[RMDB]
RNA sequence: GGGAACGACUCGAGUAGAGUCGAAAAGGACUGUGUCUGAUGAGCAUGAGUCGAUGUCUGCUGCCGGGUUUGCGAGGGAGCGGCUUGGCUGGUGGGAUCGUGGCCAGUCUGCUACGUCUGUGAUACCGGUAGUCAAGUACUUCGGUACUUGACUACCAAAAGAAACAACAACAACAAC
Reactivity to 2A3 in 0.01 (KOAc 150mM, MgCl2 10mM, bicine 150mM(pH8.5), 24C), signal-to-noise 3, nucleotides 027 to 126: g030g000a020c020u020g060u030g020u110c030u050g090a090u030g040a080g090c010a010u060g110a010g020u010c020g070a040u120g090u060c040u080g010c020u040g090c010c010g200g090g000u110u250u300g140c080g040a130g020g030g020a040g000c020g000g010c000u030u040g000g020c010u030g070g000u010g050g110g040a040u050c030g010u080g000g010c000c000a010g020u000c010u010g000c020u060a050c030g120u060c070u120g150u070g120a080u110a170c010c050
Reactivity to DMS in 0.01 (KOAc 150mM, MgCl2 10mM, bicine 150mM(pH8.5), 24C), signal-to-noise 2, nucleotides 027 to 126: g010g020a030c000u000g000u010g020u000c020u000g000a050u000g010a290g010c030a060u010g010a070g030u000c010g000a030u000g010u020c010u000g010c020u000g030c030c010g000g010g040u000u020u000g020c100g020a170g000g000g000a050g020c010g000g010c010u000u010g020g020c000u010g010g020u010g010g000g010a060u000c050g010u010g010g020c020c040a040g000u000c010u000g010c090u010a060c110g010u000c070u010g020u000g000a110u000a170c120c070